Chemical mapping of a 177-nucleotide RNA with DMS and 2A3. For 2A3 the reverse transcriptase was SuperScript II with manganese. The data come from the RNA Mapping Database (RMDB), library OK1LIB. High 2A3 reactivity points to a flexible backbone, as in loops and unpaired stretches.
RNA sequence: GGGAACGACUCGAGUAGAGUCGAAAAGACGCUGAUGCGAUCGACUGUAAGAUAGAUACACUGAGCAGACAGAUACGUACGGCAAGUAUCGUCGCCAGAACUACAGUCGCAAAUUGCCGUACGAAGAGAUGGUAAAUUUAUUCGUAAAUUUACCAUCAAAAGAAACAACAACAACAAC
Reactivity to DMS in 0.01 (KOAc 150mM, MgCl2 10mM, bicine 150mM(pH8.5), 24C), signal-to-noise 7, nucleotides 027 to 126: g020a110c040g020c010u010g000a100u040g030c030g010a160u020c000g020a010c000u000g010u000a010a070g000a210u050a130g020a140u040a120c270a290c030u010g000a070g010c010a110g010a030c030a110g020a100u030a060c010g010u010a020c000g000g000c020a000a030g010u000a040u010c060g010u000c000g020c010c010a030g010a090a150c070u010a010c010a010g000u000c010g000c180a030a080a050u000u000g000c000c000g000u020a090c120g000a130a060g000a180
Reactivity to 2A3 in 0.01 (KOAc 150mM, MgCl2 10mM, bicine 150mM(pH8.5), 24C), signal-to-noise 9, nucleotides 027 to 126: g070a010c030g010c070u190g100a120u300g050c030g070a100u050c010g000a010c000u010g010u050a130a060g060a160u180a080g120a060u180a140c080a020c050u020g010a030g060c050a070g020a020c010a030g060a070u080a110c010g030u020a000c000g020g000c010a020a020g050u040a040u120c050g000u000c000g010c010c010a030g030a090a000c010u020a000c010a010g000u010c010g000c050a050a090a040u030u010g000c000c000g000u010a020c020g030a060a030g040a000